This 207-nucleotide RNA was probed chemically with DMS and 2A3.
Conditions: 150 mM KOAc, 10 mM MgCl2 and 150 mM bicine (pH 8.5), 24 C.
The 2A3 profile rests on 1,246 reads.
[RMDB]
RNA sequence: GGGAACGACUCGAGUAGAGUCGAAAAGUAGAAUCUGUCAAGCAAAACCCCAAAACAUUACACUGAGAGCAUUUAGCCUGAUUACUCUUUAAAUCAAAUCAGGCAAUAGAGAGAAACUCGAGAGGUGAAACGGGAGUAAUGUUCGCAUUACUCCCAAUCUUUCUGAUACGUUCGCGUAUCAGAAAGAAAAAGAAACAACAACAACAAC
Reactivity to DMS in 0.01 (KOAc 150mM, MgCl2 10mM, bicine 150mM(pH8.5), 24C), signal-to-noise 1, nucleotides 027 to 156: g000u010a060g000a090a090u010c090u010g010u000c050a010a130g010c030a050a040a090a130c000c000c000c050a020a080a120a130c040a160u020u000a010c020a120c150u000g010a070g000a040g010c000a300u000u010u000a080g070c010c000u000g030a050u000u000a070c110u000c050u030u000u000a070a080a060u000c100a050a020a010u000c000a030g000g000c000a050a030u000a050g010a110g000a110g000a130a030a050c010u010c000g000a060g000a100g000g000u000g000a070a120a150c080g020g020g000a090g010u000a010a020u020g010u000u000c250g100c000a030u000u000a000c020u010c000c000c000a030a000
Reactivity to 2A3 in 0.01 (KOAc 150mM, MgCl2 10mM, bicine 150mM(pH8.5), 24C), signal-to-noise 3, nucleotides 027 to 156: g040u050a020g030a080a110u010c020u070g030u070c060a050a030g030c010a060a050a120a180c020c020c010c060a010a090a030a010c070a050u190u270a040c070a030c120u230g050a010g000a000g020c000a020u000u020u060a000g020c000c000u000g000a020u010u080a050c030u050c070u140u280u100a050a090a040u190c100a010a000a010u000c000a010g000g000c000a000a000u000a000g010a000g020a000g010a080a080a060c010u000c020g050a050g020a040g110g060u070g080a100a070a020c080g010g000g000a010g000u000a010a010u010g030u010u090c170g020c130a000u000u000a000c000u020c000c000c000a010a000
The data come from the RNA Mapping Database (RMDB), library M2RFPK. 2A3 adducts were read by reverse transcription with SuperScript II with manganese.